[RMDB]
RNA sequence: GGGAACGACUCGAGUAGAGUCGAAAAAUUGAUGCGAAGGGGGGACGGAGAAGGCAAUGUUGGCCGGGCGACGGUUGUCCCGGUUUAAGCGUGUAGGCUGGUUUUCCAGGCAAAUCCGGAAAUUGAACUUUGGAAAUACAUUCGUGUAUUUCCAAAGAAAAGAAACAACAACAACAAC
Reactivity to 2A3 in 0.01 (KOAc 150mM, MgCl2 10mM, bicine 150mM(pH8.5), 24C), signal-to-noise 1, nucleotides 027 to 126: a000u080u070g010a010u060g000c020g040a060a040g000g010g000g040g000g010a000c000g000g040a030g000a060a000g000g000c010a020a120u070g010u080u020g060g000c050c000g000g010g000c040g010a120c080g080g130u100u130g080u200c010c000c000g010g000u030u030u030a030a000g020c010g000u030g020u060a020g040g090c000u030g000g000u050u110u030u000c020c000a010g050g020c000a070a060a040u060c020c030g100g050a030a030a080u100u070g020a090a040
Reactivity to DMS in 0.01 (KOAc 150mM, MgCl2 10mM, bicine 150mM(pH8.5), 24C), signal-to-noise 4, nucleotides 027 to 126: a080u000u000g010a060u010g000c050g020a080a070g010g020g010g010g000g010a060c060g010g000a060g010a090a070g000g010c060a050a070u010g010u000u000g000g010c020c010g000g000g020c300g010a080c100g010g020u010u010g000u010c010c000c000g000g000u000u000u000a040a060g010c030g000u000g010u010a070g010g010c020u000g010g000u010u000u000u010c030c020a140g000g000c080a030a050a090u000c040c020g010g010a040a050a100u010u000g010a080a130